Chemical mapping of a 177-nucleotide RNA with DMS. Conditions: 150 mM KOAc, 10 mM MgCl2 and 150 mM bicine (pH 8.5), 24 C. For DMS the reverse transcriptase was MarathonRT. The DMS profile rests on 2,040 reads.
RNA sequence: GGGAACGACUCGAGUAGAGUCGAAAAGCCACGCUAUUCGUAGCGUGGCGGUUAAGAUCUAGACAAAAACUGACAAAAAGUCUUGAUCAAAUAAAGUCAGAACGGUCCGGGAUUUCGAUCCCGGAAAUAAAACAUUUAACUUCGGUUAAAUGUUUUAAAAAGAAACAACAACAACAAC
Reactivity to DMS in 0.01 (KOAc 150mM, MgCl2 10mM, bicine 150mM(pH8.5), 24C), signal-to-noise 2, nucleotides 027 to 126: g020c000c000a010c000g000c010u000a020u000u020c120g020u000a000g010c000g030u000g010g020c010g000g000u000u010a070a140g010a040u000c010u000a010g000a010c000a090a090a110a140a060c050u000g000a050c050a100a090a060a090a100g000u000c000u000u000g010a020u000c030a060a080a070u000a060a070a130g000u010c020a020g020a210a150c220g010g000u000c000c010g000g000g000a010u000u000u000c140g000a030u000c000c000c010g000g000a000a010a050